Structure probing data (DMS and 2A3) for a 207-nucleotide construct. Reactivities are given for positions 27 through 156. The RNA was probed in 150 mM KOAc, 10 mM MgCl2 and 150 mM bicine (pH 8.5) at 24 C. The data come from the RNA Mapping Database (RMDB), library OK3TST.
[RMDB]
RNA sequence: GGGAACGACUCGAGUAGAGUCGAAAAUGUUACCUUGUAGAGCCGAAGUCAGAUCUACAGUCUUAUGCACUAUUGAUGAGCCAGUAGCAUCUGUAAUGGUGCGGGUUAACUCAGCUCUGGCUGUGUAGGCACCUUCCUUUAGGCCGCCAGCGGCUUCCCAUAGGGAGGAUUUCGAUCCUCCCUAUGGAAAAGAAACAACAACAACAAC
Reactivity to DMS in 0.01 (KOAc 150mM, MgCl2 10mM, bicine 150mM(pH8.5), 24C), signal-to-noise 3, nucleotides 027 to 156: u000g020u000u010a150c040c030u010u020g020u000a050g000a090g010c010c000g020a120a140g010u010c030a080g010a030u000c020u000a060c040a050g000u000c060u000u000a050u010g010c080a050c050u010a110u000u010g000a120u000g000a100g030c040c050a200g010u020a160g020c010a020u000c040u000g010u000a080a070u010g020g040u000g000c000g020g020g040u010u010a020a050c030u000c070a070g000c040u010c030u010g020g000c010u000g070u010g030u000a050g010g020c010a060c010c020u000u000c160c120u000u000u000a040g030g000c030c010g010c010c040a300g000c030g000g000c020u010u000c020
Reactivity to 2A3 in 0.01 (KOAc 150mM, MgCl2 10mM, bicine 150mM(pH8.5), 24C), signal-to-noise 5, nucleotides 027 to 156: u150g000u020u090a080c010c010u030u070g080u090a050g000a010g050c000c020g050a050a010g070u080c000a010g010a050u000c020u040a020c040a060g040u020c030u080u140a110u200g080c030a030c060u110a080u180u130g050a060u020g010a030g050c050c050a080g080u120a020g070c040a040u000c010u060g130u160a060a070u140g010g000u010g010c020g020g040g000u090u150a040a030c020u020c100a000g010c010u020c030u110g040g010c000u020g020u020g050u130a130g010g000c020a030c000c000u080u140c010c060u090u220u090a050g050g000c050c060g010c000c020a030g030c030g020g000c000u050u030c000